RNA sequence: GGGAACGACUCGAGUAGAGUCGAAAACUUCUCCGUGAGUAUCUUCGUGAACAGCUGGUCCCUCCUCCAGCCGUCGAGCGUCAUCUCACCGUAAAACAUCAGCUCAGGAAGGAGUAGGAGGCCGAGAGCUUUUAAAUCAGUUCGCUGAUUUAAAAGCAAAAGAAACAACAACAACAAC
Reactivity to DMS in 0.01 (KOAc 150mM, MgCl2 10mM, bicine 150mM(pH8.5), 24C), signal-to-noise 4, nucleotides 027 to 126: c240u000u000c030u000c010c050g010u010g010a090g010u010a060u010c050u000u000c070g030u000g000a120a080c110a110g010c050u000g010g010u000c030c010c000u000c050c010u010c010c000a050g010c000c010g010u010c200g010a060g010c020g030u000c120a120u000c080u000c070a060c090c110g000u000a040a050a070a080c150a080u000c110a090g010c010u010c030a110g000g010a040a050g000g000a050g010u000a030g000g010a060g010g010c050c030g000a080g020a100
Reactivity to 2A3 in 0.01 (KOAc 150mM, MgCl2 10mM, bicine 150mM(pH8.5), 24C), signal-to-noise 4, nucleotides 027 to 126: c020u030u010c020u000c020c000g100u070g050a030g040u120a090u120c050u120u080c090g080u100g110a060a040c030a050g050c040u070g000g000u010c020c010c010u000c010c000u020c000c010a010g010c000c000g090u100c090g010a010g010c020g090u070c040a180u030c060u060c070a100c070c010g070u080a060a070a040a060c040a090u150c070a030g000c010u000c000a010g020g010a070a010g010g010a000g000u000a010g000g060a100g010g000c010c010g050a050g010a010